This 177-nucleotide RNA was probed chemically with DMS.
[RMDB]
RNA sequence: GGGAACGACUCGAGUAGAGUCGAAAAGAUUGCUGGGUCAGUUGCUCUGAGUGCCUGAGGGCAGCCCUGUGCCCACCCAGCCUGGGUGUGUGUGGUGGCAGUUGUAAACUCCUGAAUGAACACCAAGCUCCAAUGUGGGAUUCGUCCCACAUUGGAGAAAAGAAACAACAACAACAAC
Reactivity to DMS in 0.01 (KOAc 150mM, MgCl2 10mM, bicine 150mM(pH8.5), 24C), signal-to-noise 1, nucleotides 027 to 126: g010a100u010u000g020c020u000g020g020g000u000c140a110g030u010u000g010c050u010c000u000g000a110g030u000g010c040c030u020g020a040g010g020g010c000a060g040c040c020c040u020g020u000g020c000c010c000a150c050c010c000a080g000c120c150u020g020g000g010u000g030u000g020u040g000u010g020g010u010g010g000c050a050g010u000u010g020u010a030a040a180c040u000c020c040u020g000a130a090u020g020a040a040c070a040c060c090a040a060g000